[RMDB]
RNA sequence: GGGAACGACUCGAGUAGAGUCGAAAAUACGCAUCGGGUAUAAUUGGACGAGAAACCGGAAUGAUAUUGUAAAGGUAGAAGAAUCGGCGGAGCUAACCCGUUUUGCCGUUUGGCAGUCCGUACCCUAUAUUGAGAUUAAUCCGGUAAUUAUUAAUAACGUUUUAAACCGUUUCGACGGUUUAAAACGAAAAGAAACAACAACAACAAC
Reactivity to 2A3 in 0.01 (KOAc 150mM, MgCl2 10mM, bicine 150mM(pH8.5), 24C), signal-to-noise 2, nucleotides 027 to 156: u230a000c040g000c030a010u090c050g020g050g010u050a030u040a190a230u210u140g000g030a000c020g000a050g150a130a120a000c020c000g010g020a020a000u130g060a040u100a120u280u160g040u160a090a150a050g010g010u030a050g020a250a000g030a020a100u060c010g000g000c040g000g000a000g030c000u010a000a090c000c000c000g020u110u030u020u020g000c000c000g020u030u070u030g030g020c020a020g000u000c020c010g000u010a020c030c000c010u010a030u010a000u030u090g000a040g000a040u130u120a040a030u010c010c000g000g000u040a070a050u250u210a030u190u180a000a070u230a080a120
Reactivity to DMS in 0.01 (KOAc 150mM, MgCl2 10mM, bicine 150mM(pH8.5), 24C), signal-to-noise 1, nucleotides 027 to 156: u000a050c040g000c110a110u000c060g030g020g000u020a040u010a070a080u010u000g000g030a120c040g000a220g000a100a120a020c030c000g030g020a120a160u000g020a140u010a000u000u030g000u020a040a130a170g020g040u010a080g010a150a180g010a060a070u000c030g020g010c010g040g030a130g000c120u010a010a090c150c030c080g000u000u000u000u000g030c010c010g030u000u000u010g020g000c040a030g000u000c040c010g000u000a070c000c000c000u000a090u000a060u000u010g040a100g010a090u000u010a090a150u000c010c010g010g010u000a050a050u010u000a070u010u010a120a060u000a070a240
Structure probing data (2A3 and DMS) for a 207-nucleotide construct. The reactions ran in a buffer of 150 mM KOAc, 10 mM MgCl2 and 150 mM bicine (pH 8.5), at 24 C. For DMS the reverse transcriptase was MarathonRT. The data come from the RNA Mapping Database (RMDB), library OK3TST. For 2A3, 748 sequencing reads were counted.